[RMDB]
RNA sequence: GGGAACGACUCGAGUAGAGUCGAAAACGGCGGUGCCGGCGGUGCGGGAGGGAAGCUGCCGUCGUCCAAGUUCAAGGGCGUCGUGCCGCAGCCCAACGGGAGGUGGGGCGCGCAGAUCUACGAGCGGAUCUUGGAUGUCAUUCGUGACAUCCAAGAUAAAAGAAACAACAACAACAAC
Reactivity to DMS in 0.01 (KOAc 150mM, MgCl2 10mM, bicine 150mM(pH8.5), 24C), signal-to-noise 2, nucleotides 027 to 126: c080g010g010c080g010g000u000g000c140c060g000g030c120g000g030u000g040c080g000g000g000a150g000g030g000a030a040g050c010u000g000c000c010g000u000c010g070u010c010c010a100a120g010u000u020c300a130a150g030g020g000c000g000u010c030g030u020g020c060c060g030c000a130g000c000c000c020a160a090c140g000g000g050a130g000g000u050g000g010g020g000c010g010c060g000c010a020g010a100u000c070u000a100c110g000a100g000c140g000g010
Reactivity to 2A3 in 0.01 (KOAc 150mM, MgCl2 10mM, bicine 150mM(pH8.5), 24C), signal-to-noise 2, nucleotides 027 to 126: c010g060g010c070g080g090u170g090c090c060g090g000c090g000g090u170g020c160g000g000g030a070g000g030g000a020a000g000c020u000g000c000c010g000u010c010g000u000c010c000a080a010g110u140u200c110a140a130g010g000g000c000g030u000c010g030u140g030c000c040g000c000a020g030c000c000c020a040a030c030g010g000g010a070g050g090u160g020g010g010g020c040g000c020g000c030a040g020a130u040c050u090a060c060g020a060g010c040g020g000
Overview:
This 177-nucleotide RNA was probed chemically with DMS and 2A3. For DMS the reverse transcriptase was MarathonRT. 2A3 adducts were read by reverse transcription with SuperScript II with manganese. Conditions: 150 mM KOAc, 10 mM MgCl2 and 150 mM bicine (pH 8.5), 24 C. The data come from the RNA Mapping Database (RMDB), library OK2TRN. For DMS, 1,472 sequencing reads were counted.